[RMDB]
RNA sequence: GGGAACGACUCGAGUAGAGUCGAAAAAAAAUAUACGAGAAGGAGAAAUGGCAACUGGAUGGAUGAUGGUGUAGUUGCCAGGGCCAUCUGGACCUCAUGUAGCAUCUUUGUACAACUAGAGAAUGAUGCCCUCUUGGUGGACACAGCCCUGUGGAUAGUAUAAAUACGUCUUCGGACGUAUUUAUACAAAAGAAACAACAACAACAAC
Reactivity to DMS in 0.01 (KOAc 150mM, MgCl2 10mM, bicine 150mM(pH8.5), 24C), signal-to-noise 2, nucleotides 027 to 156: a090a030a080a130u010a110u000a110c050g000a080g020a070a040g000g000a100g000a060a050a070u000g060g010c020a060a060c010u010g020g000a090u000g010g000a050u000g000a110u000g030g020u000g030u000a100g040u000u000g020c030c030a040g030g000g040c010c010a060u000c070u000g030g000a050c040c030u000c060a040u000g010u000a050g020c030a070u010c040u000u000u000g030u000a110c080a050a100c060u000a060g010a130g010a110a060u010g000a050u010g020c020c060c030u000c040u000u000g020g020u000g010g010a250c040a060c070a090g000c030c010c020u000g030u010g020g010a110u010a160
Reactivity to 2A3 in 0.01 (KOAc 150mM, MgCl2 10mM, bicine 150mM(pH8.5), 24C), signal-to-noise 3, nucleotides 027 to 156: a000a000a010a010u160a010u030a020c020g010a010g010a070a020g030g010a020g020a060a100a040u090g030g000c010a040a040c050u040g040g050a070u040g010g040a040u060g010a050u070g050g030u040g010u070a030g010u020u050g010c000c010a020g010g000g010c030c010a040u030c040u060g040g050a070c010c000u040c020a040u080g030u060a020g040c000a040u030c050u080u160u090g100u070a070c050a080a060c110u080a040g020a010g030a130a040u080g020a020u020g020c030c020c000u040c010u020u040g020g000u030g010g020a030c020a000c010a040g030c020c010c030u020g000u030g070g010a020u060a090